Chemical mapping of a 207-nucleotide RNA with 2A3. Values are in units of 0.01, from 0 to 300, in steps of 10. 2A3 adducts were read by reverse transcription with SuperScript II with manganese. Reactivities are given for positions 27 through 156. The data come from the RNA Mapping Database (RMDB), library OK3TST. The RNA was probed in 150 mM KOAc, 10 mM MgCl2 and 150 mM bicine (pH 8.5) at 24 C.

RNA sequence: GGGAACGACUCGAGUAGAGUCGAAAACUCGCUCUCUCAGCCUCCGAGUUCCCCGAUUUUGACUUUCGACGGGAUGUGCUCCCGGACGAGCUCAAGAAGCUGGAGGGUCUCGAGAAGCGAGUACACAGAGUCAAGGGCGAGGAGGGUGUGCGUGCGCGUUUCCACUCUCUUUCGAGAGAGUGGAAACAAAAGAAACAACAACAACAAC
Reactivity to 2A3 in 0.01 (KOAc 150mM, MgCl2 10mM, bicine 150mM(pH8.5), 24C), signal-to-noise 1, nucleotides 027 to 156: c010u000c000g000c000u010c000u040c000u000c020a010g010c000c000u000c000c000g060a050g050u040u060c050c010c000c000g040a050u000u020u080u060g000a010c000u180u300u120c000g000a000c010g020g000g020a040u180g130u120g240c060u020c010c000c020g010g000a050c000g010a000g000c000u010c040a040a030g020a050a010g130c140u070g040g030a020g010g020g080u110c060u030c110g020a010g010a030a000g000c000g000a000g050u060a000c040a000c000a020g120a000g060u060c030a040a050g030g000g040c040g000a030g070g020a040g040g030g030u090g010u040g040c050g010u010g020c080g000c030